[RMDB]
RNA sequence: GGGAACGACUCGAGUAGAGUCGAAAAUUAGCAGCUUAAUAACCUGCUUAGAGCCCUCUCUCCCUAGCCUCCGCUCUUAGGACGGGGAUCAAGAGAGGUCAAACCCAAAAGAGAUCGCGUGGAAGCCCUGCCUGGGGUUGAAGCGUUAAAACUUAAUCCAAUAAGCAUUGUUCGCAAUGCUUAUUGGAAAAGAAACAACAACAACAAC
Reactivity to 2A3 in 0.01 (KOAc 150mM, MgCl2 10mM, bicine 150mM(pH8.5), 24C), signal-to-noise 2, nucleotides 027 to 156: u080u020a000g000c000a000g000c010u010u020a040a010u020a080a100c000c000u010g020c030u050u020a040g040a030g120c010c000c000u000c000u000c010u010c010c010c010u010a040g030c000c000u020c010c010g010c030u040c020u100u080a050g010g020a120c010g000g000g000g010a000u070c110a060a020g010a000g000a000g020g000u010c010a050a060a090c010c000c000a040a060a020a000g040a000g010a010u110c060g000c010g000u000g020g020a010a020g010c000c010c000u030g100c060c100u180g060g010g000g000u010u010g010a010a020g000c000g000u010u020a040a090a000a040c020u030u030a030a030u050